RNA sequence: GGGAACGACUCGAGUAGAGUCGAAAAGAAAGCUGAGGUGAAGCUGAAGAGAGCCGUCUAUUGACAGUUCAAGACCACGAGUCGUUGUGUGCUGUCAUGGAGUCGCUCUCUUCAGAUGAUCCGGUAAAUGUACAUGAACAUUCGUGUUCAUGUACAUAAAAGAAACAACAACAACAAC
Reactivity to 2A3 in 0.01 (KOAc 150mM, MgCl2 10mM, bicine 150mM(pH8.5), 24C), signal-to-noise 9, nucleotides 027 to 126: g070a020a080a010g080c140u200g060a040g040g030u020g010a040a010g010c000u000g000a000a000g000a000g000a000g030c070c100g130u010c010u020a100u080u120g000a000c000a000g000u020u050c030a070a020g010a030c010c020a120c270g070a150g060u030c040g070u070u150g090u020g030u050g060c000u000g000u000c000a010u010g030g020a040g020u050c010g000c000u000c000u000c000u000u000c000a000g000a000u000g000a000u000c000c000g000g000u110a070a090
Reactivity to DMS in 0.01 (KOAc 150mM, MgCl2 10mM, bicine 150mM(pH8.5), 24C), signal-to-noise 9, nucleotides 027 to 126: g010a120a120a140g010c070u010g000a170g000g010u000g000a290a180g000c010u000g000a010a010g000a020g000a010g010c030c250g000u010c000u000a030u020u010g000a010c000a010g000u000u000c020a070a110g000a070c030c030a160c230g000a150g010u000c010g000u010u000g020u010g010u000g000c000u000g000u000c010a010u000g000g000a030g000u020c260g000c000u000c000u000c000u000u000c000a000g010a010u000g000a170u000c000c000g000g010u010a050a070